[RMDB]
RNA sequence: GGGAACGACUCGAGUAGAGUCGAAAAGUAGCAAUGGCUUGUGGUUCGUUUAGAGACUGCUUGCUUAUAACACUUGGCCAGAACGAAAAUCUAUCUAAUAUCCGUAGCGUCAUAAUGUGUAGUAUAGGUACUCCAUAACCUUCGGGUUAUGGAGUACAAAAGAAACAACAACAACAAC
Reactivity to 2A3 in 0.01 (KOAc 150mM, MgCl2 10mM, bicine 150mM(pH8.5), 24C), signal-to-noise 1, nucleotides 027 to 126: g100u120a030g030c060a020a080u070g000g000c000u060u040g010u000g000g010u040u000c060g060u090u140u290a070g000a010g010a040c000u010g000c010u020u030g000c010u180u010a140u050a140a030c050a020c020u060u090g030g000c010c010a040g040a090a020c030g050a000a010a000a130u080c040u060a040u040c010u020a140a080u060a080u100c030c010g060u020a030g030c010g040u020c020a030u000a220a000u070g070u040g080u050a040g030u050a060u040a170g100
Reactivity to DMS in 0.01 (KOAc 150mM, MgCl2 10mM, bicine 150mM(pH8.5), 24C), signal-to-noise 2, nucleotides 027 to 126: g010u000a070g020c110a160a080u000g000g000c010u010u030g040u000g010g000u000u000c020g000u000u020u010a150g000a160g010a040c040u000g000c000u010u000g000c010u000u000a020u000a070a120c110a000c030u000u010g000g000c040c040a060g000a090a100c140g000a040a040a080a080u000c060u020a100u000c040u000a050a040u000a080u000c020c070g000u000a030g020c080g000u000c090a050u000a050a090u020g020u000g000u000a050g000u000a110u000a110g020